[RMDB]
RNA sequence: GGGAACGACUCGAGUAGAGUCGAAAAGUGCCUCGUCGGCCCGGCAUGCCAACCUGAUCCGAAGUUCAAGGUGGAUUCUCUGGCCUUCCAGAGAGAUGCGCGUCGGAAGAACCGACGAACAAACCUUAAAACAAAACGACGUUCGCGUCGUUUUGAAGGAUAAUUAUUUGUUCGCAAAUAAUUAUCCAAAAGAAACAACAACAACAAC
Reactivity to DMS in 0.01 (KOAc 150mM, MgCl2 10mM, bicine 150mM(pH8.5), 24C), signal-to-noise 2, nucleotides 027 to 156: g010u000g020c030c020u010c020g000u000c010g020g040c020c030c000g000g000c050a110u000g010c000c020a100a080c020c020u000g010a080u000c040c150g050a180a170g000u000u000c030a060a070g010g010u010g020g000a160u020u000c010u000c040u000g000g000c190c190u000u000c020c010a040g000a050g010a050g000a110u000g020c040g020c020g000u000c000g000g000a110a110g020a200a060c010c000g000a040c000g020a030a040c010a060a100a090c020c030u020u000a070a100a120a180c010a010a000a000a010c000g000a040c000g020u010u010c290g020c060g000u000c000g000u000u000u000u000g020a070a150
Reactivity to 2A3 in 0.01 (KOAc 150mM, MgCl2 10mM, bicine 150mM(pH8.5), 24C), signal-to-noise 5, nucleotides 027 to 156: g040u030g060c020c020u010c010g000u010c010g000g040c000c000c000g010g000c020a020u090g020c010c010a070a080c030c000u020g030a040u050c090c080g220a210a090g060u060u040c060a090a030g000g000u010g010g040a070u150u000c000u000c000u000g030g000c040c030u250u140c020c000a000g010a010g000a010g020a070u120g000c050g000c020g030u010c000g000g010a090a050g020a100a060c000c000g010a000c000g010a030a010c020a010a070a040c020c030u140u200a080a120a040a030c010a000a000a000a000c000g010a000c000g020u050u060c180g010c010g100u010c000g000u000u000u000u000g000a010a000